[RMDB]
RNA sequence: GGGAACGACUCGAGUAGAGUCGAAAAACGUCACAGGUGCAAGCGCAUCACAGUGUACUUCACAGACGAUCCGGACCAUGUGCAGCAGUCCUGCGCCGGCCGCUUCUGGCGCCGUUCUGACGGCUGCUCCAAAUCAACAUUUCGAUGUUGAUUUGGAAAAAGAAACAACAACAACAAC
Reactivity to DMS in 0.01 (KOAc 150mM, MgCl2 10mM, bicine 150mM(pH8.5), 24C), signal-to-noise 9, nucleotides 027 to 126: a100c070g000u000c020a110c180a100g010g020u000g010c140a050a050g020c070g020c010a040u000c140a100c250a110g010u000g010u010a060c040u000u000c040a050c060a110g000a040c050g000a090u000c030c020g010g000a080c090c070a070u000g020u000g000c030a030g010c020a080g000u010c030c090u000g010c030g010c050c070g000g000c210c130g000c120u000u010c090u000g010g010c010g010c020c090g010u010u000c120u010g010a050c040g000g010c010u000g010c020
Reactivity to 2A3 in 0.01 (KOAc 150mM, MgCl2 10mM, bicine 150mM(pH8.5), 24C), signal-to-noise 6, nucleotides 027 to 126: a000c020g010u020c020a040c030a140g230g000u030g020c070a070a080g040c030g000c070a020u080c030a050c060a090g030u020g010u060a080c030u040u050c020a020c010a040g040a020c030g020a030u040c020c000g010g030a050c060c020a110u130g050u090g110c020a010g010c010a000g030u010c000c020u020g000c010g000c010c000g020g040c080c060g110c080u220u090c040u120g030g000c000g000c000c010g030u120u070c050u090g030a030c010g030g010c000u020g000c000